[RMDB]
Structure probing data (2A3 and DMS) for a 177-nucleotide construct.
The DMS profile rests on 8,809 reads.
It was measured as part of the RMDB library OK1LIB.

RNA sequence: GGGAACGACUCGAGUAGAGUCGAAAAGAAGAAGAUUAUCUAAGUCUAAGACCUUGUUUCAAACUAACAAGGGCGCAUGGAGGAAGGCCGGACCUCCAUACUUAGACAGGCGCGAUCCGGCCAAGAAGACCAUAUACUACUUCGGUAGUAUAUGGUCAAAAGAAACAACAACAACAAC
Reactivity to 2A3 in 0.01 (KOAc 150mM, MgCl2 10mM, bicine 150mM(pH8.5), 24C), signal-to-noise 8, nucleotides 027 to 126: g110a030a010g080a050a020g030a090u160u180a040u240c070u110a100a000g010u000c000u020a000a010g010a030c000c000u000u000g090u010u090u110c250a210a170a100c080u110a010a000c010a000a010g010g010g000c040g000c050a010u030g010g000a010g040g000a080a230g030g010c000c000g000g000a030c000c000u000c000c000a000u000a010c010u000u010a000g000a010c020a020g120g060c120g000c010g090a010u010c000c000g000g000c000c000a000a000g010a030a010
Reactivity to DMS in 0.01 (KOAc 150mM, MgCl2 10mM, bicine 150mM(pH8.5), 24C), signal-to-noise 4, nucleotides 027 to 126: g000a090a090g020a060a100g000a140u050u010a090u030c010u020a090a130g000u000c000u000a000a020g000a220c000c000u000u020g000u020u020u020c190a170a060a120c300u040a050a000c010a000a000g000g000g000c180g000c230a040u010g000g000a010g000g010a050a100g000g010c000c000g000g000a050c000c000u020c000c030a010u000a030c000u000u000a030g000a010c020a060g010g040c200g010c130g020a070u000c010c000g020g020c000c010a060a040g010a140a080